RNA sequence: GGGAACGACUCGAGUAGAGUCGAAAAGACGGGUACGCGCAGGCCCUGGUCACCUUCGCCCCACAAGUUGAGGCUUGUGUGCUCACCAUCAGAAGCACGCAGAGUAACACGUGCACCUCUGCCGACGCAUCCUAAGCCACUUCGGUGGCUUAGGAUGAAAAGAAACAACAACAACAAC
Reactivity to 2A3 in 0.01 (KOAc 150mM, MgCl2 10mM, bicine 150mM(pH8.5), 24C), signal-to-noise 2, nucleotides 027 to 126: g030a030c080g030g020g030u120a020c020g020c020g060c110a050g070g000c020c010c090u040g060g040u040c030a070c020c000u110u140c080g060c110c000c050c000a010c020a040a040g010u110u120g080a090g070g050c000u030u020g040u000g010u020g030c010u020c020a070c050c040a060u070c030a010g070a150a050g100c040a010c010g000c020a000g030a000g020u160a100a000c030a000c070g050u030g030c010a010c010c000u010c000u020g010c010c040g030a020c050g000
Reactivity to DMS in 0.01 (KOAc 150mM, MgCl2 10mM, bicine 150mM(pH8.5), 24C), signal-to-noise 2, nucleotides 027 to 126: g010a060c010g000g000g010u000a040c060g030c100g030c130a090g000g020c020c000c030u000g010g000u000c060a080c050c070u020u010c120g040c060c030c020c030a060c080a080a060g000u010u000g000a070g000g000c050u010u040g020u000g000u000g000c030u000c050a100c120c120a080u010c050a110g000a140a050g010c040a040c100g010c000a020g000a060g020u000a090a040c080a090c060g030u000g000c090a050c080c050u000c010u010g000c030c020g000a120c200g000